RNA sequence: GGGAACGACUCGAGUAGAGUCGAAAAGUGAUGGGUAUCGCACCGGACAGCAUCCUUGGCGUGGCGGUGGAAACCGUCACCGACAAAAUCAACGACCUGGACACGCUGGCGCGCAACUACAGCGCGCACAAAGACCAAUUUUCGAAUUGGUCUUUGUAAAAGAAACAACAACAACAAC
Reactivity to DMS in 0.01 (KOAc 150mM, MgCl2 10mM, bicine 150mM(pH8.5), 24C), signal-to-noise 9, nucleotides 027 to 126: g020u000g010a090u010g010g010g010u010a070u000c060g010c050a090c040c030g000g000a120c060a090g020c030a190u000c080c080u000u010g010g010c090g020u000g010g000c010g010g010u000g010g020a060a090a040c010c000g010u000c010a010c040c050g010a080c110a040a050a070a110u010c080a060a110c080g000a090c030c030u000g000g000a070c070a060c100g010c090u000g020g010c000g000c010g010c000a070a100c170u010a090c160a100g010c010g010c000g020c020
Reactivity to 2A3 in 0.01 (KOAc 150mM, MgCl2 10mM, bicine 150mM(pH8.5), 24C), signal-to-noise 8, nucleotides 027 to 126: g080u060g030a060u090g030g020g060u120a050u120c060g010c130a020c050c000g030g050a040c020a030g020c010a060u070c030c040u070u130g060g000c090g030u020g010g010c010g020g020u020g040g100a100a050a010c000c010g000u000c010a010c010c000g020a010c040a010a130a020a070u120c040a050a070c030g060a050c010c010u030g030g020a030c040a010c100g050c040u040g050g000c000g000c000g010c020a090a060c040u230a070c060a060g000c010g000c000g020c010
Structure probing data (DMS and 2A3) for a 177-nucleotide construct. The 2A3 profile rests on 21,457 reads. Conditions: 150 mM KOAc, 10 mM MgCl2 and 150 mM bicine (pH 8.5), 24 C. 2A3 adducts were read by reverse transcription with SuperScript II with manganese.